[RMDB]
RNA sequence: GGGAACGACUCGAGUAGAGUCGAAAAUGAACUCAUCGAUUCACCAACGCUUCCGACCUGUGAGCGGAUCGCGGUGCUCAGCCAGUCAGGCGUCAACUUGGUCAUGCAACGGUGGGUGUACCACAGCAGUACAGAGUCUGUUCGCAGACUCUGUACUAAAAGAAACAACAACAACAAC
Reactivity to 2A3 in 0.01 (KOAc 150mM, MgCl2 10mM, bicine 150mM(pH8.5), 24C), signal-to-noise 8, nucleotides 027 to 126: u120g030a010a010c010u010c020a020u030c030g180a220u060u060c040a010c060c000a060a030c050g000c040u070u040c040c050g080a150c020c080u170g050u080g090a030g020c030g000g050a030u060c080g000c020g070g010u050g020c010u040c050a040g020c030c000a020g070u110c020a030g020g050c010g070u060c030a070a110c030u050u080g000g030u080c030a070u130g020c040a050a040c020g030g000u010g010g010g000u070g050u070a040c020c020a050c030a060g110c050
Reactivity to DMS in 0.01 (KOAc 150mM, MgCl2 10mM, bicine 150mM(pH8.5), 24C), signal-to-noise 4, nucleotides 027 to 126: u030g010a110a050c020u000c010a000u010c010g010a130u000u040c130a060c080c060a110a140c010g000c070u010u010c080c030g000a070c020c060u010g020u020g000a120g020c000g000g000a030u020c070g010c110g000g010u020g000c070u010c210a070g000c160c090a120g010u010c070a110g010g000c040g000u010c070a140a090c090u020u020g000g010u000c090a040u020g000c060a070a140c070g010g030u000g000g000g030u020g000u020a120c020c010a060c200a090g000c210
Background: Chemical mapping of a 177-nucleotide RNA with 2A3 and DMS. The data come from the RNA Mapping Database (RMDB), library OK1LIB. DMS adducts were read by reverse transcription with MarathonRT. For 2A3, 8,700 sequencing reads were counted.